[RMDB]
RNA sequence: GGGAACGACUCGAGUAGAGUCGAAAAGAUAUGGAGUCGACCGUCGUUGAUCUAGUCCAAACACUACCCACCAGCUUCGGAAACGAAGCUGAGGUGUUUGGACUAGGGAGACGGGACUCCUAAGUCACACACUUACCAUGUUCGCAUGGUAAGUGUGAAAAGAAACAACAACAACAAC
Reactivity to DMS in 0.01 (KOAc 150mM, MgCl2 10mM, bicine 150mM(pH8.5), 24C), signal-to-noise 2, nucleotides 027 to 126: g000a050u000a300u000g010g000a020g010u010c020g010a290c000c000g020u000c000g040u010u010g000a020u000c010u010a000g020u020c000c020a060a000a010c000a000c000u020a100c040c040c070a300c130c000a000g000c000u000u010c000g020g010a090a170a170c000g020a000a010g010c000u000g000a020g030g020u000g000u010u000u000g020g000a000c000u000a000g000g020g040a000g000a000c000g020g000g000a010c000u000c000c000u000a000a040g000u010c050a300
Reactivity to 2A3 in 0.01 (KOAc 150mM, MgCl2 10mM, bicine 150mM(pH8.5), 24C), signal-to-noise 2, nucleotides 027 to 126: g120a080u240a150u300g020g020a000g050u040c130g270a300c050c000g000u010c020g190u250u060g010a020u000c000u000a020g000u000c000c000a020a000a000c000a000c000u200a180c080c110c050a030c020c010a000g000c020u000u010c040g030g040a110a080a080c000g000a010a000g000c000u000g010a010g000g000u000g060u010u000u000g000g000a000c020u010a000g030g020g000a030g010a010c000g020g000g000a000c000u000c010c000u040a130a020g100u110c010a010
Chemical mapping of a 177-nucleotide RNA with DMS and 2A3. The data come from the RNA Mapping Database (RMDB), library TTRINS. The DMS profile rests on 1,586 reads. DMS (dimethyl sulfate) methylates the pairing face of unpaired adenines and cytosines. For 2A3, 3,597 sequencing reads were counted. Values cover nucleotides 27 to 126.